[RMDB]
An RNA of 177 nucleotides, treated with DMS and read out base by base. Reactivities are given for positions 27 through 126. The reactions ran in a buffer of 150 mM KOAc, 10 mM MgCl2 and 150 mM bicine (pH 8.5), at 24 C. For DMS the reverse transcriptase was MarathonRT.

RNA sequence: GGGAACGACUCGAGUAGAGUCGAAAAAAAAGAUAUGGACGACCUCCCCACCGGUUGAUCACCGUUGAAAGAGAGUCGGAAACGACUCUCUGGAGGUGACCAACCGAGGGUCGUCCUAAGUCAAAAACACUCUGAAUACGUUCGCGUAUUCAGAGUGAAAAGAAACAACAACAACAAC
Reactivity to DMS in 0.01 (KOAc 150mM, MgCl2 10mM, bicine 150mM(pH8.5), 24C), signal-to-noise 1, nucleotides 027 to 126: a060a060a200a070g010a020u000a100u000g010g000a000c010g000a010c010c020u000c100c040c020c030a300c080c010g010g020u010u000g000a000u000c000a010c000c000g000u000u010g000a160a120a010g000a010g000a040g000u000c000g000g040a000a010a050c000g000a020c000u000c000u000c010u000g000g020a000g040g010u000g040a000c060c010a000a000c000c010g000a050g000g010g010u000c010g010u000c000c000u000a000a060g000u000c050a070a030a170a140a090